[RMDB]
RNA sequence: GGGAACGACUCGAGUAGAGUCGAAAAGGCCGCGGCGGCCGGCGCGGGCGAGCUGCGCGCGCUGUUCUCCCGCUGCGGCUGGUUCAACACGCUCGCGCCCGAGCAUCAGGCGCUCGUCGUCGCGCAAAGCACGGUAAUUAUUCGUAAUUACCGUGCUAAAAGAAACAACAACAACAAC
Reactivity to 2A3 in 0.01 (KOAc 150mM, MgCl2 10mM, bicine 150mM(pH8.5), 24C), signal-to-noise 2, nucleotides 027 to 126: g020g010c010c010g000c000g020g000c010g000g000c040c020g020g000c000g000c000g000g180g010c030g070a140g140c200u220g010c300g030c020g000c000g010c080u000g060u160u050c080u050c050c000c010g040c000u000g000c000g000g000c010u000g010g000u030u070c040a070a040c030a030c100g050c040u070c020g000c000g030c000c000c030g000a020g040c000a090u150c080a070g300g000c090g010c110u020c020g050u020c030g050u070c000g000c000g020c060a140a080
Reactivity to DMS in 0.01 (KOAc 150mM, MgCl2 10mM, bicine 150mM(pH8.5), 24C), signal-to-noise 5, nucleotides 027 to 126: g000g000c020c010g030c000g000g020c010g020g030c300c050g000g000c020g020c000g000g000g040c010g010a140g020c210u010g030c010g010c000g030c000g010c010u010g000u010u010c150u010c220c020c000g010c000u000g000c000g010g010c010u000g000g000u000u010c070a110a090c100a110c160g020c090u000c040g020c020g010c030c020c010g000a050g010c040a100u000c140a120g020g000c100g010c010u000c050g000u010c050g010u000c040g010c050g010c150a100a110

Structure probing data (2A3 and DMS) for a 177-nucleotide construct. Conditions: 150 mM KOAc, 10 mM MgCl2 and 150 mM bicine (pH 8.5), 24 C. Reactivities are rounded to 0.1 and cut off at 0 and 3. The data come from the RNA Mapping Database (RMDB), library OK2TRN. Reactivities are given for positions 27 through 126. The DMS profile rests on 4,769 reads.